[RMDB]
RNA sequence: GGGAACGACUCGAGUAGAGUCGAAAAAGCAGGGUUGCUUUAAUGCUUUUCUUUUCUUAUUAGCUCCUUCAAAUCAAACCAUAUGUUUGGGUCACCGCGCUAUCCUGAGAAAUGUCUGCCACUAAGUAGACCUCAAAUACUGCAAUGUCUGGCGUUACGCCUAAUAAAAUUUCGAUUUUAUUAGGCGAAAAGAAACAACAACAACAAC
Reactivity to DMS in 0.01 (KOAc 150mM, MgCl2 10mM, bicine 150mM(pH8.5), 24C), signal-to-noise 2, nucleotides 027 to 156: a100g020c070a090g020g000g010u000u000g000c000u010u000u020a010a080u000g000c010u000u000u000u000c020u000u010u000u010c050u020u000a110u000u000a060g010c030u000c010c010u000u000c080a060a080a140u010c070a070a070a100c020c050a090u000a070u000g010u010u000u000g030g000g000u000c030a080c050c030g000c050g030c020u000a050u010c020c040u000g010a100g010a060a050a100u000g010u000c020u000g060c030c010a100c140u000a060a060g030u010a120g000a080c050c050u000c060a050a030a080u010a070c030u000g000c060a040a090u000g010u010c000u010g030g030c020g010u000u000a120
Reactivity to 2A3 in 0.01 (KOAc 150mM, MgCl2 10mM, bicine 150mM(pH8.5), 24C), signal-to-noise 4, nucleotides 027 to 156: a010g050c060a040g070g050g010u150u050g040c020u130u100u110a090a040u070g020c020u040u020u170u040c030u050u110u050u030c030u070u090a210u050u080a030g010c040u050c010c010u080u060c060a060a070a160u040c040a060a040a100c040c030a050u060a050u220g060u050u060u050g030g000g030u040c020a020c080c010g010c000g030c020u020a030u060c010c020u040g010a010g050a030a050a000u060g030u010c020u020g020c010c020a120c110u020a110a000g020u000a020g050a030c020c000u040c030a050a090a020u120a050c070u050g070c030a020a100u050g030u020c060u070g060g000c030g020u000u000a030